The data come from the RNA Mapping Database (RMDB), library M2RFPK.
An RNA of 207 nucleotides, treated with DMS and 2A3 and read out base by base.
The RNA was probed in 150 mM KOAc, 10 mM MgCl2 and 150 mM bicine (pH 8.5) at 24 C.
2A3 is a SHAPE reagent: it acylates the 2'-hydroxyl of flexible nucleotides of all four kinds.
2A3 adducts were read by reverse transcription with SuperScript II with manganese.
The DMS profile rests on 6,283 reads.
[RMDB]
RNA sequence: GGGAACGACUCGAGUAGAGUCGAAAAGCCGCAUAUCCCGUGACAUUGCGAAAGCAAGGCUGGCGGUAGGUAGUCCUGGGCGGCGACAGCCUUGGACUGCGGCGUAAAGGUGUACCUGGGGCCGUUAUAACGCGGUAACAGUUCGCUGUUACCGCAACGAUAAGUAUGACUUCGGUCAUACUUAUCGAAAAGAAACAACAACAACAAC
Reactivity to DMS in 0.01 (KOAc 150mM, MgCl2 10mM, bicine 150mM(pH8.5), 24C), signal-to-noise 2, nucleotides 027 to 156: g010c010c000g040c020a170u000a160u000c070c010c000g060u020g010a050c070a100u010u000g020c020g000a160a110a230g000c010a020a010g010g030c020u000g020g020c050g010g020u000a100g020g040u000a050g010u000c010c010u010g000g020g030c010g030g050c070g020a070c090a160g020c010c000u000u010g010g010a040c010u020g000c000g010g050c020g020u000a050a090a090g020g010u000g000u000a060c020c040u000g030g010g020g030c040c030g010u010u000a110u000a120a130c130g010c020g010g000u000a020a010c000a030g020u000u000c220g040c000u000g010u000u000a010c000c000g010c000a010a000
Reactivity to 2A3 in 0.01 (KOAc 150mM, MgCl2 10mM, bicine 150mM(pH8.5), 24C), signal-to-noise 5, nucleotides 027 to 156: g000c010c000g000c020a040u050a030u110c000c000c020g020u050g050a060c130a200u020u070g000c020g070a120a030a030g000c010a010a010g050g030c060u070g060g000c010g010g000u030a030g010g140u100a020g010u010c000c030u040g000g000g000c030g010g040c040g030a040c070a020g000c000c000u010u020g000g010a020c020u020g000c010g000g010c000g010u050a060a070a060g010g010u060g030u110a080c020c020u050g020g000g020g010c010c000g020u060u050a150u060a180a060c150g000c000g010g000u000a000a000c000a000g040u080u090c200g020c090u000g010u000u000a000c010c000g000c000a000a000